[RMDB]
RNA sequence: GGGAACGACUCGAGUAGAGUCGAAAAGCAAGCACGUGCUGAAGACAAGAAAGCAAAAAUUGUCAGUGCUAUGCAAACUAUGUUGUUUGGUAUGAUUAAGAAGCUCGACAACGAUGUUCUUAAUGGUUAGUCGACACGUUCGCGUGUCGAAAAAGAAACAACAACAACAAC
Reactivity to 2A3 in 0.01 (KOAc 150mM, MgCl2 10mM, bicine 150mM(pH8.5), 24C), signal-to-noise 2, nucleotides 027 to 129: g010c090a080a010g000c000a000c000g160u080g100c000u210g000a080a000g020a000c000a060a000g090a170a140a000g140c010a050a020a020a020a010u030u030g000u000c000a000g080u180g020c020u000a250u020g010c110a000a000a000c040u090a000u120g010u000u000g070u000u000u070g080g000u190a120u190g150a030u010u160a000a000g030a000a000g000c000u050c000g000a030c020a050a140c000g100a010u300g010u010u000c040u000u220a000a030u050g040g000u090u060a000g020
Reactivity to DMS in 0.01 (KOAc 150mM, MgCl2 10mM, bicine 150mM(pH8.5), 24C), signal-to-noise 3, nucleotides 027 to 129: g040c040a080a080g130c030a050c040g000u040g070c170u000g010a190a140g070a010c120a150a090g020a120a060a130g000c230a080a090a140a110a070u000u110g020u020c060a130g080u020g020c000u060a030u100g000c040a110a130a050c000u040a010u000g070u000u040g000u000u040u000g010g010u040a100u030g050a070u010u010a030a050g060a070a020g080c060u020c030g000a120c300a060a020c160g040a030u050g060u050u060c000u000u030a000a210u000g010g030u000u200a040g040
This 170-nucleotide RNA was probed chemically with 2A3 and DMS. The RNA was probed in 150 mM KOAc, 10 mM MgCl2 and 150 mM bicine (pH 8.5) at 24 C.